[RMDB]
This 177-nucleotide RNA was probed chemically with DMS and 2A3. High 2A3 reactivity points to a flexible backbone, as in loops and unpaired stretches. The RNA was probed in 150 mM KOAc, 10 mM MgCl2 and 150 mM bicine (pH 8.5) at 24 C. 2A3 adducts were read by reverse transcription with SuperScript II with manganese. The 2A3 profile rests on 2,118 reads. The data come from the RNA Mapping Database (RMDB), library M2PK50. The DMS profile rests on 1,255 reads.

RNA sequence: GGGAACGACUCGAGUAGAGUCGAAAAAGUUUAGAUUUCGAUCUAAACUAGACGACUAAGAGGAUGACGAGUGACUACGACGCAUCUAGUAGAAUGCGCCCAGCUGUGAGCAGUUCGCUGCUCACAAGCCUUCCGUUAACUUCGGUUAACGGAAGGCAAAAGAAACAACAACAACAAC
Reactivity to DMS in 0.01 (KOAc 150mM, MgCl2 10mM, bicine 150mM(pH8.5), 24C), signal-to-noise 2, nucleotides 027 to 126: a060g000u000u000u000a020g000a010u000u000u020c110g030a000u000c000u000a000a000a000c000u000a050g000a300c030g030a010c040u000a060a090g000a070g010g010a110u000g000a100c020g010a120g010u000g030a100c110u000a070c080g000a100c060g020c030a020u000c010u030a130g010u000a080g000a040a020u000g030c050g010c020c020c100a120g020c110u020g000u000g000a000g020c010a000g000u000u040c170g030c020u000g010c000u000c000a010c030a030a030
Reactivity to 2A3 in 0.01 (KOAc 150mM, MgCl2 10mM, bicine 150mM(pH8.5), 24C), signal-to-noise 2, nucleotides 027 to 126: a000g010u000u020u000a000g010a020u030u070u130c260g050a010u010c000u000a010a000a000c010u000a010g060a010c050g000a000c020u050a100a050g080a070g290g000a080u120g040a060c010g000a010g050u060g010a080c050u070a040c220g080a020c030g050c020a010u000c020u050a020g030u000a040g100a170a030u030g010c010g070c010c000c030a040g020c050u030g000u010g020a000g030c010a000g000u030u050c160g010c110u010g000c000u000c010a000c010a000a010